[RMDB]
RNA sequence: GGGAACGACUCGAGUAGAGUCGAAAAGCUAUAUGAACUGGUUGAGGCCAUGGUGGAGAAGGGCCAGGAUGGUUCCGCUGUGCUUGAGCUUGACCUUUGCAACCGUGAUGUCUCGCGUAUUACAUUCGCUACUUGCCCUAUUCGUAGGGCAAGUAGCAAAAGAAACAACAACAACAAC
Reactivity to DMS in 0.01 (KOAc 150mM, MgCl2 10mM, bicine 150mM(pH8.5), 24C), signal-to-noise 1, nucleotides 027 to 126: g000c060u000a140u010a120u010g020a050a060c150u010g030g020u010u010g020a080g010g010c020c050a010u000g010g030u000g010g020a260g020a020a050g010g010g000c050c020a040g000g020a030u000g010g010u000u000c030c160g010c060u000g000u000g020c020u000u000g010a130g020c000u000u010g010a100c000c000u000u000u000g030c100a180a040c060c010g010u000g000a120u020g010u000c000u010c000g020c060g000u010a070u000u000a100c080a090u000u000c200
Reactivity to 2A3 in 0.01 (KOAc 150mM, MgCl2 10mM, bicine 150mM(pH8.5), 24C), signal-to-noise 2, nucleotides 027 to 126: g050c030u030a010u030a080u300g060a140a040c050u090g080g070u150u160g040a010g030g000c050c010a000u040g000g000u030g030g160a100g000a020a030g020g010g000c000c000a020g040g010a010u130g120g000u060u060c090c090g000c060u110g010u080g120c020u000u070g010a010g020c010u020u050g030a050c000c000u030u070u050g000c050a020a010c040c020g000u030g040a100u090g030u010c010u040c000g000c000g010u090a050u100u190a120c170a190u050u130c050